An RNA of 177 nucleotides, treated with DMS and 2A3 and read out base by base.
2A3 adducts were read by reverse transcription with SuperScript II with manganese.
DMS adducts were read by reverse transcription with MarathonRT.
The RNA was probed in 150 mM KOAc, 10 mM MgCl2 and 150 mM bicine (pH 8.5) at 24 C.
Values are in units of 0.01, from 0 to 300, in steps of 10.
RNA sequence: GGGAACGACUCGAGUAGAGUCGAAAAGAGCUUCCAGGCUGGUGUGCAGCAGGAUAACUGGUUAGGUACAGGUUAUGCUGUUGGUAUCAACGGGACCAAAAACGAUUACCAGACCUAUGCUGAACUGGCUUCCGCUGAUAUUCGUAUCAGCGGAAGCAAAAGAAACAACAACAACAAC
Reactivity to DMS in 0.01 (KOAc 150mM, MgCl2 10mM, bicine 150mM(pH8.5), 24C), signal-to-noise 1, nucleotides 027 to 126: g010a090g020c070u010u030c020c030a260g030g000c000u000g000g010u000g000u000g000c010a040g000c000a030g000g000a020u000a010a100c030u000g000g010u030u010a090g010g010u000a090c110a180g000g000u020u000a060u000g010c000u000g000u000u000g000g010u000a040u000c040a030a000c060g000g000g000a060c050c030a020a050a080a070a060c060g000a220u000u000a060c010c030a060g000a150c020c010u000a020u020g010c050u010g010a170a050c110u000g000
Reactivity to 2A3 in 0.01 (KOAc 150mM, MgCl2 10mM, bicine 150mM(pH8.5), 24C), signal-to-noise 2, nucleotides 027 to 126: g030a030g000c000u060u010c030c000a000g020g040c040u020g030g050u090g070u090g160c010a000g000c030a000g000g030a040u040a090a100c010u010g010g110u020u090a020g130g060u050a050c080a130g080g000u030u030a060u200g110c020u030g010u040u000g010g020u160a140u300c000a020a000c020g050g030g030a010c050c000a040a040a040a010a000c010g040a150u090u140a000c000c000a010g020a040c020c010u070a140u100g060c030u010g000a020a010c010u010g000